[RMDB]
Notes
This 177-nucleotide RNA was probed chemically with DMS and 2A3. Source: RMDB library OK1LIB, as collected in RNAgym.
RNA sequence: GGGAACGACUCGAGUAGAGUCGAAAAUUGGAUCCACGCCUCACAUGUAAAGGCUGCAGGGCCAACCACCAAUCAGGACCCCUCAGACGACCCCAGCUCAGACGAUCCAUCGAGAUGGAAGGUCCAAGAUAUAACUCACAUUCGUGUGAGUUAUAUCAAAAGAAACAACAACAACAAC
Reactivity to DMS in 0.01 (KOAc 150mM, MgCl2 10mM, bicine 150mM(pH8.5), 24C), signal-to-noise 9, nucleotides 027 to 126: u010u020g000g010a050u010c020c040a130c110g000c020c010u010c110a110c130a080u010g010u030a100a110a100g010g010c030u000g020c140a090g030g000g000c020c030a060a080c070c060a120c040c050a060a080u020c100a080g010g000a110c050c000c020c010u010c060a060g000a090c090g000a070c040c010c000c020a070g020c040u020c040a080g010a060c060g000a110u010c020c020a090u010c100g010a070g000a070u010g010g000a070a080g010g000u000c010c080a060a090
Reactivity to 2A3 in 0.01 (KOAc 150mM, MgCl2 10mM, bicine 150mM(pH8.5), 24C), signal-to-noise 9, nucleotides 027 to 126: u050u030g030g010a030u000c020c010a030c060g020c010c010u090c010a110c030a120u180g080u300a120a090a050g040g000c040u050g040c100a110g030g020g010c010c000a020a030c010c010a030c010c020a030a050u100c030a040g060g020a090c010c000c020c000u030c040a060g010a090c050g040a040c010c000c000c010a010g010c010u020c030a030g010a070c030g040a050u020c010c010a030u030c050g050a070g010a070u050g040g030a070a090g040g000u000c010c000a020a010